[RMDB]
RNA sequence: GGGAACGACUCGAGUAGAGUCGAAAAUCCAAUCGAGCUCAUCAAGGCCAUGGACAUGAUUCAGGGGCAGCAGACCUCCGGCGCCUGCUCGAUUGCUCAGUGGGCAGCGGUCGAAGCACUGAACGGACCAUAUCCUACUCUUCGGAGUAGGAUAUGGAAAAGAAACAACAACAACAAC
Reactivity to 2A3 in 0.01 (KOAc 150mM, MgCl2 10mM, bicine 150mM(pH8.5), 24C), signal-to-noise 2, nucleotides 027 to 126: u050c010c000a010a010u090c070g040a020g020c010u020c050a080u040c050a210a120g040g000c030c010a040u070g030g050a030c060a100u180g020a240u130u010c040a030g040g000g100g000c000a020g040c000a000g040a060c010c000u030c060c040g120g040c070g010c000c020u020g010c000u020c060g060a040u030u020g000c010u000c030a030g030u070g030g030g040c030a020g010c030g040g000u020c020g010a060a000g000c000a000c030u030g010a060a010c020g040g020a020
Reactivity to DMS in 0.01 (KOAc 150mM, MgCl2 10mM, bicine 150mM(pH8.5), 24C), signal-to-noise 3, nucleotides 027 to 126: u000c020c010a150a080u000c110g000a050g000c010u010c070a060u010c110a120a070g000g000c020c050a080u010g000g000a090c080a100u010g000a090u000u000c060a050g000g000g020g020c030a080g010c110a160g000a090c070c040u000c120c050g030g020c070g030c070c070u000g000c000u000c040g010a060u010u020g010c100u000c040a090g030u010g020g000g010c050a070g000c070g000g010u000c010g020a150a110g010c030a060c070u000g010a040a050c080g010g020a230
This 177-nucleotide RNA was probed chemically with 2A3 and DMS. DMS adducts were read by reverse transcription with MarathonRT. The data come from the RNA Mapping Database (RMDB), library OK2TST. Reactivities are given for positions 27 through 126.